RNA sequence: GGGAACGACUCGAGUAGAGUCGAAAAGUUACCUUUUCGAGCUCUUACUUAGUGUCCUGGCAAAUGUAUUGGCCUAUUUCAUUUGCAAAUGGCUAGACGCUAAGGACAAAAGCGAUAGCUAGCCUGUGAACACUGUUCUGUUCGCAGAACAGUGUUCAAAAGAAACAACAACAACAAC
Reactivity to 2A3 in 0.01 (KOAc 150mM, MgCl2 10mM, bicine 150mM(pH8.5), 24C), signal-to-noise 1, nucleotides 027 to 126: g050u060u240a110c020c000u000u010u000u010c020g080a130g060c000u040c050u090u230a030c000u030u030a010g010u020g010u090c010c000u000g030g000c000a000a000a020u030g010u090a060u130u100g180g170c040c040u050a070u000u120u050c000a000u040u000u030g030c000a040a040a150u040g000g000c000u000a000g000a020c010g000c010u030a080a130g140g030a090c000a020a100a000a010g000c010g070a060u070a080g080c000u010a000g000c000c000u030g120u110